[RMDB]
RNA sequence: GGGAACGACUCGAGUAGAGUCGAAAAGGUGGCAGUAAAAUGUUUAUUGUGUUUGAAUGUGUUUAUGUAAGAGGAGCCGUACCUGUUGGUAUGUCUCAUUAUAAUGACACUACCUUCUUAAAUGGACGAGUAUUAAGACGUUCGCGUCUUAAUACUCAAAAGAAACAACAACAACAAC
Reactivity to DMS in 0.01 (KOAc 150mM, MgCl2 10mM, bicine 150mM(pH8.5), 24C), signal-to-noise 3, nucleotides 027 to 126: g010g010u000g010g010c010a030g010u000a030a030a120a140u020g020u010u000u010a030u010u000g030u000g020u010u000u000g010a100a070u000g000u000g010u000u000u010a060u020g000u010a020a040g000a170g020g000a030g010c040c000g020u000a020c010c000u010g000u000u020g030g000u000a000u000g000u000c030u000c030a060u010u000a020u000a070a140u000g000a010c010a020c020u000a080c030c010u000u000c050u000u010a040a080a130u000g000g010a170c210
Reactivity to 2A3 in 0.01 (KOAc 150mM, MgCl2 10mM, bicine 150mM(pH8.5), 24C), signal-to-noise 3, nucleotides 027 to 126: g000g010u040g060g000c020a010g030u050a010a040a090a160u190g100u080u070u030a090u030u020g060u000g100u050u100u110g150a130a030u140g020u000g010u020u030u150a080u110g020u020a030a020g040a090g200g080a010g000c000c010g000u010a000c000c010u120g210u210u300g000g000u010a000u000g010u000c000u000c000a000u020u030a020u020a040a130u070g010a010c000a000c020u010a030c030c000u100u020c000u070u210a180a210a130u090g060g020a030c050
An RNA of 177 nucleotides, treated with DMS and 2A3 and read out base by base. The DMS profile rests on 3,312 reads. For 2A3 the reverse transcriptase was SuperScript II with manganese. Conditions: 150 mM KOAc, 10 mM MgCl2 and 150 mM bicine (pH 8.5), 24 C. It was measured as part of the RMDB library RFMREP.